[RMDB]
RNA sequence: GGGAACGACUCGAGUAGAGUCGAAAAUUAUACCCGCAUAUCAUUCAGACCCUUUAUGGAACUGUCAUUCUACCCCAAAAAUCUAGUGCAAAUAUUGUCUUAAUUACUUAGGCUAAAAGAAAUAAGUUAUACAAUACACUCUUCGGAGUGUAUUGAAUCCUACCAAUAGAUUCGUCUAUUGGUAGGAAAAAGAAACAACAACAACAAC
Reactivity to DMS in 0.01 (KOAc 150mM, MgCl2 10mM, bicine 150mM(pH8.5), 24C), signal-to-noise 1, nucleotides 027 to 156: u020u000a130u020a130c030c000c070g030c130a130u000a060u000c050a130u000u020c060a080g040a170c050c010c030u000u000u010a090u030g010g000a110a040c040u000g000u000c030a180u010u000c000u000a250c040c010c020c040a000a110a100a110a090u000c030u010a130g020u010g020c060a060a100a170u000a090u000u010g000u000c000u000u000a060a080u010u000a030c050u000u000a040g000g030c050u000a080a070a060a100g010a130a080a130u010a020a080g000u000u000a150u010a130c020a010a010u020a010c000a000c000u000c000u000u010c300g040g000a020g060u000g000u000a000u000u000g000a120a070
This 207-nucleotide RNA was probed chemically with DMS. The RNA was probed in 150 mM KOAc, 10 mM MgCl2 and 150 mM bicine (pH 8.5) at 24 C.